[RMDB]
RNA sequence: GGGAACGACUCGAGUAGAGUCGAAAAGACCUUAGGAUUUGUCCGAAAAGCAUGACAAAGUCGGAUCUAGGCUAAGGAAGGAUGGGCGAAUAAUCUUUUGUCAUGCUUAGAUUCAAAUUCCAUCCUAGAUUGUAUAGAAUUUCGAUUCUGUGCAAUCAAAAGAAACAACAACAACAAC
Reactivity to DMS in 0.01 (KOAc 150mM, MgCl2 10mM, bicine 150mM(pH8.5), 24C), signal-to-noise 9, nucleotides 027 to 126: g010a190c030c020u010u010a040g000g010a060u010u020u010g000u000c030c040g000a080a090a050a030g010c010a000u000g010a010c010a060a060a090g030u020c070g000g010a040u010c140u020a080g010g010c030u020a060a060g010g020a140a050g000g000a020u000g000g000g010c150g000a090a080u030a070a040u010c040u000u010u010u010g010u000c010a000u000g000c010u000u010a040g000a060u010u000c100a030a050a110u020u020c010c020a030u000c010c010u000a140
Reactivity to 2A3 in 0.01 (KOAc 150mM, MgCl2 10mM, bicine 150mM(pH8.5), 24C), signal-to-noise 9, nucleotides 027 to 126: g060a040c010c000u010u050a020g020g010a060u050u020u120g040u020c020c020g020a070a110a010a010g010c000a000u010g000a010c010a030a160a040g100u090c040g030g010a040u030c020u080a050g070g020c010u030a020a040g050g020a030a020g020g010a040u030g010g010g020c030g040a040a030u150a060a020u050c020u000u050u020u030g010u000c000a000u000g000c000u000u010a010g000a020u040u040c010a010a000a020u070u000c000c010a000u000c000c000u000a020